[RMDB]
RNA sequence: GGGAACGACUCGAGUAGAGUCGAAAAGAACCAUCUGGUAGCUGGUUCCUGCCGAAGUUUCCCUCAGGAUAGCAGUAACGUUUUCAGUUUUAUGAGGUAAAGCGAAUGAUUAGAGGCCUUGGGGUUGGCUCUACUAUUUGUUCGCAAAUAGUAGAGCAAAAGAAACAACAACAACAAC
Reactivity to DMS in 0.01 (KOAc 150mM, MgCl2 10mM, bicine 150mM(pH8.5), 24C), signal-to-noise 2, nucleotides 027 to 126: g010a120a050c010c020a050u000c040u010g010g020u020a050g030c160u000g000g010u000u000c040c020u010g010c020c030g000a060a140g020u000u000u000c030c020c000u000c150a090g000g010a050u010a060g020c030a050g000u030a050a100c070g000u000u000u000u010c070a090g000u000u010u010u010a090u020g020a100g000g020u000a050a090a070g000c030g010a080a070u010g000a070u000u000a080g020a140g030g020c010c020u000u000g010g030g000g020u000u000g010